[RMDB]
RNA sequence: GGGAACGACUCGAGUAGAGUCGAAAAAGAGCAUGUCUUACCAGGAGCAAGAUGAACUUUUUGCCAUGACAAAGCGUAACGUCAUUCCUACCAUGACUCAAAUGAAUCUAAAAUAUGCUAUUAGUGCUAACGCUUGUGUUCGCACAAGCGAAAAGAAACAACAACAACAAC
Reactivity to DMS in 0.01 (KOAc 150mM, MgCl2 10mM, bicine 150mM(pH8.5), 24C), signal-to-noise 6, nucleotides 027 to 129: a020g070a030g030c030a010u020g000u040c030u000u000a100c020c040a110g000g000a160g030c090a030a040g010a070u030g000a100a110c070u040u060u010u000u010g040c060c090a060u000g000a070c080a060a070a060g000c090g000u040a080a060c130g000u030c030a070u000u010c030c020u020a060c080c040a060u000g030a040c060u000c000a040a080a050u090g000a040a100u050c090u070a030a100a080a080u040a070u000g000c040u070a120u060u030a050g000u000g030c000u060a060a110
Reactivity to 2A3 in 0.01 (KOAc 150mM, MgCl2 10mM, bicine 150mM(pH8.5), 24C), signal-to-noise 9, nucleotides 027 to 129: a000g050a000g010c020a020u040g020u040c010u060u090a070c040c050a020g040g020a040g020c040a040a060g010a040u080g040a030a150c040u030u030u020u040u070g030c030c050a100u110g010a030c020a020a040a000g060c030g070u050a050a040c040g000u020c010a020u010u050c000c010u020a040c000c040a050u040g050a090c000u030c060a050a040a100u180g050a050a080u060c050u120a050a050a040a070u200a070u120g000c010u030a090u140u110a120g030u030g080c010u040a080a020
The record gives the reactivity of an RNA of 170 nucleotides to DMS and 2A3. The RNA was probed in 150 mM KOAc, 10 mM MgCl2 and 150 mM bicine (pH 8.5) at 24 C. The data come from the RNA Mapping Database (RMDB), library 15KLIB. Values cover nucleotides 27 to 129.